An RNA of 177 nucleotides, treated with 2A3 and DMS and read out base by base. For DMS, 41,995 sequencing reads were counted.
RNA sequence: GGGAACGACUCGAGUAGAGUCGAAAAGAUGUCGCGGGAAUGUCGAUGAUCGGGAUGGUGAUGGAGCCGAUACCGGCGCUGGCGGUGAUACCGAUCGAGGUGGUGGGUCCGCCCACGGUGAUCGCCGAAUGCUUGGUUAAUUCGUUAACCAAGCAUUAAAAGAAACAACAACAACAAC
Reactivity to 2A3 in 0.01 (KOAc 150mM, MgCl2 10mM, bicine 150mM(pH8.5), 24C), signal-to-noise 9, nucleotides 027 to 126: g080a040u100g020u080c030g000c020g040g030g050a100a140u130g050u080c030g030a090u090g030a040u080c020g010g010g020a060u090g020g060u060g020a100u130g060g060a030g030c020c000g040a050u080a120c050c010g020g000c030g010c040u050g040g010c010g010g000u030g000a020u030a040c000c010g020a080u150c090g020a140g030g020u050g020g020u120g050g070g070u060c010c010g010c000c010c000a010c000g000g030u050g040a030u030c010g000c010c000g010
Reactivity to DMS in 0.01 (KOAc 150mM, MgCl2 10mM, bicine 150mM(pH8.5), 24C), signal-to-noise 9, nucleotides 027 to 126: g010a070u020g000u010c030g010c050g000g000g010a100a060u020g010u010c040g020a070u010g000a070u010c050g000g000g010a090u020g010g010u000g010a080u020g010g010a140g010c040c030g010a120u020a090c110c050g000g010c060g010c080u010g000g010c010g010g010u000g010a060u010a050c020c000g010a070u020c140g010a100g010g020u010g010g010u020g010g020g020u010c040c050g010c010c000c020a110c020g000g010u000g000a030u000c010g010c010c010g000